[RMDB]
RNA sequence: GGGAACGACUCGAGUAGAGUCGAAAAUCACAGAUGACCGACAUGCCAUCCGUGUCCGGCGGCAAUCAAAAGAGGAGUGUGAGCUAUUAUGACAAACAGCGGGAUGAGAUGCCCCAGGCAUCUAUCAUCCUUAAAAGUUGUUCGCAACUUUUAAGGAAAAAGAAACAACAACAACAAC
Reactivity to DMS in 0.01 (KOAc 150mM, MgCl2 10mM, bicine 150mM(pH8.5), 24C), signal-to-noise 9, nucleotides 027 to 126: u010c030a070c060a070g000a060u000g010a080c020c060g010a110c200a080u000g010c040c020a050u000c040c050g010u000g010u000c060c060g020g020c120g010g020c070a060a060u010c090a040a050a110a090g000a080g010g010a070g010u010g020u010g010a100g020c030u000a060u010u010a060u000g010a070c110a040a070a060c090a060g010c080g010g000g010a060u000g000a040g010a020u000g000c010c010c100c130a110g010g010c020a010u000c010u000a060u010c060a100
Reactivity to 2A3 in 0.01 (KOAc 150mM, MgCl2 10mM, bicine 150mM(pH8.5), 24C), signal-to-noise 6, nucleotides 027 to 126: u080c020a020c010a040g100a080u070g050a100c010c040g050a030c030a060u110g020c020c010a030u030c020c030g030u020g060u080c040c020g040g000c020g030g000c040a040a080u050c040a030a120a070a060g080a030g050g020a020g020u070g010u030g030a010g000c000u010a030u270u060a110u250g080a040c040a030a110a010c020a040g060c050g030g050g020a020u050g070a020g010a030u040g010c000c000c010c010a020g000g030c000a010u000c010u010a050u050c020a020
The record gives the reactivity of an RNA of 177 nucleotides to DMS and 2A3. For 2A3, 9,845 sequencing reads were counted.